[RMDB]
Chemical mapping of a 177-nucleotide RNA with 2A3 and DMS. DMS adducts were read by reverse transcription with MarathonRT.
RNA sequence: GGGAACGACUCGAGUAGAGUCGAAAAACAUAACACAGUGUCCUAAGACUGUUGUUACAUCAGAUGUGGUACCACGAUACGCGUUUGUGAAUGGUGGAUUAAUUGCAAACUGCAUAACAACUACAUGGAACGGUGAGAGAUUCGUCUCUCACCGUUCAAAAGAAACAACAACAACAAC
Reactivity to 2A3 in 0.01 (KOAc 150mM, MgCl2 10mM, bicine 150mM(pH8.5), 24C), signal-to-noise 2, nucleotides 027 to 126: a010c050a090u210a150a010c030a040c010a090g070u080g060u050c040c010u060a040a040g060a090c060u040g050u070u100g020u060u060a040c050a140u090c000a020g030a100u040g020u060g020g020u000a050c000c010a000c090g090a010u100a090c000g060c050g020u060u230u240g080u070g000a150a090u020g130g000u030g060g060a080u110u150a150a010u090u040g000c030a010a000a200c080u050g000c010a000u010a030a000c030a000a000c020u040a000c020a090u130g060
Reactivity to DMS in 0.01 (KOAc 150mM, MgCl2 10mM, bicine 150mM(pH8.5), 24C), signal-to-noise 2, nucleotides 027 to 126: a080c130a120u030a030a040c070a050c100a010g030u020g010u010c040c040u000a140a110g000a050c050u000g030u030u000g000u000u000a020c290a100u000c100a070g020a150u000g000u000g000g000u000a190c030c030a050c070g000a070u000a070c030g040c040g000u010u000u020g030u000g010a070a060u000g020g010u000g040g030a110u010u010a050a050u010u000g000c020a040a030a080c100u020g010c230a070u000a050a020c080a030a040c030u010a020c160a060u000g020